Background
This 207-nucleotide RNA was probed chemically with 2A3. For 2A3, 973 sequencing reads were counted.
RNA sequence: GGGAACGACUCGAGUAGAGUCGAAAAAAGCUUCAACGCCUUUUUUUCCAAUCUUCUUUAGCACCGGGCUAGGGAGUAAGCCCGUGGAACCUUAGUUUUGUUCCCUCGGGACUUACUUGUGGUUCCCGUGGUGCACUCCUGACCCUGCUGCUUUGAACAACACACACUUGUUCGCAAGUGUGUGUUGAAAAGAAACAACAACAACAAC
Reactivity to 2A3 in 0.01 (KOAc 150mM, MgCl2 10mM, bicine 150mM(pH8.5), 24C), signal-to-noise 2, nucleotides 027 to 156: a010a010g070c080u250u150c200a180a120c140g030c030c030u110u020u040u000u010u030u090c020c030a090a160u050c040u130u000c030u100u100u070a010g000c030a020c050c020g000g000g050c040u040a050g000g020g000a000g030u100a070a010g010c020c000c040g000u110g000g010a000a000c000c000u030u040a020g020u040u150u080u250g040u100u060c000c000c010u130c160g040g010g000a000c000u010u010a000c000u020u080g070u090g100g000u000u010c010c000c010g040u210g000g000u020g000c050a000c020u000c000c000u040g050a090c000c000c000u000g020c010u000g020c000u030u020u110g030a030a000